[RMDB]
RNA sequence: GGGAACGACUCGAGUAGAGUCGAAAACAUUAGCCGUUCGCGGCUAAUGCCGACUGUCUUGUUUGAUGGUAGAGUGGAAGCACAGGUAGACCUUUUUAGAAAUCGCCCAUUCAUUCGUGAAUGGGAACCCGAGAAUGUUAUUCGUAACAUUCUCGGGAAAAGAAACAACAACAACAAC
Reactivity to 2A3 in 0.01 (KOAc 150mM, MgCl2 10mM, bicine 150mM(pH8.5), 24C), signal-to-noise 2, nucleotides 027 to 126: c000a010u000u010a000g000c000c010g020u020u050c290g030c020g150g000c010u000a010a000u010g020c010c030g060a070c040u060g050u050c040u110u230g110u250u130u120g050a060u050g030g040u030a050g030a050g090u070g010g070a050a010g010c030a020c050a090g000g070u030a030g060a090c040c010u080u060u040u070u100a100g120a050a130a030u220c130g060c000c020c010a020u010u000c000a000u040u060c210g100u010g020a010a000u000g000g000g020a000a000
Reactivity to DMS in 0.01 (KOAc 150mM, MgCl2 10mM, bicine 150mM(pH8.5), 24C), signal-to-noise 3, nucleotides 027 to 126: c010a020u000u000a000g020c010c000g030u000u020c230g040c010g020g000c010u000a000a000u010g020c070c020g010a100c050u000g000u000c060u000u000g010u000u010u000g010a040u000g010g020u000a030g010a100g020u010g020g000a080a050g010c050a060c100a060g000g010u000a060g010a120c040c010u000u000u000u000u000a120g000a050a060a090u000c140g010c000c000c000a010u000u000c000a040u000u010c230g020u000g010a010a000u000g000g000g000a010a020

Structure probing data (2A3 and DMS) for a 177-nucleotide construct. For DMS the reverse transcriptase was MarathonRT. The reactions ran in a buffer of 150 mM KOAc, 10 mM MgCl2 and 150 mM bicine (pH 8.5), at 24 C. Values are in units of 0.01, from 0 to 300, in steps of 10.